[RMDB]
RNA sequence: GGGAACGACUCGAGUAGAGUCGAAAAUGAAGAAAGUCAUUGGUAGCUUGAUGGGGAUGGCAUUGAAUCUAUAAAUUACCUUGGGCAGUAUCGCCAUUUUCAUGAUAUUGAUUCUUCCUAUCCAUAAGAGUUAAAUUCUAUUCGUAGAAUUUAACUCAAAAGAAACAACAACAACAAC
Reactivity to 2A3 in 0.01 (KOAc 150mM, MgCl2 10mM, bicine 150mM(pH8.5), 24C), signal-to-noise 3, nucleotides 027 to 126: u120g010a010a050g050a090a070a000g060u030c020a030u050u130g090g020u100a050g050c050u060u140g040a030u050g030g010g000g000a010u030g000g010c020a020u050u080g030a050a030u010c040u070a090u100a190a170a080u130u080a080c020c000u020u040g020g040g000c020a020g040u110a060u140c040g000c010c010a030u050u030u030u040c040a020u040g060a030u050a050u120u070g030a040u000u040c000u010u010c010c010u070a130u040c020c010a080u090a160a060
Reactivity to DMS in 0.01 (KOAc 150mM, MgCl2 10mM, bicine 150mM(pH8.5), 24C), signal-to-noise 6, nucleotides 027 to 126: u010g000a070a070g010a090a090a090g000u000c050a050u000u000g010g010u000a060g010c080u000u000g010a070u010g020g000g000g010a040u000g010g000c050a090u000u000g010a090a060u010c050u000a110u010a050a090a100u010u010a070c100c080u000u000g010g010g010c070a080g000u010a050u000c110g010c020c030a060u000u000u000u000c060a050u000g000a100u000a060u000u000g000a080u010u000c040u000u010c020c090u000a110u010c060c060a070u010a090a150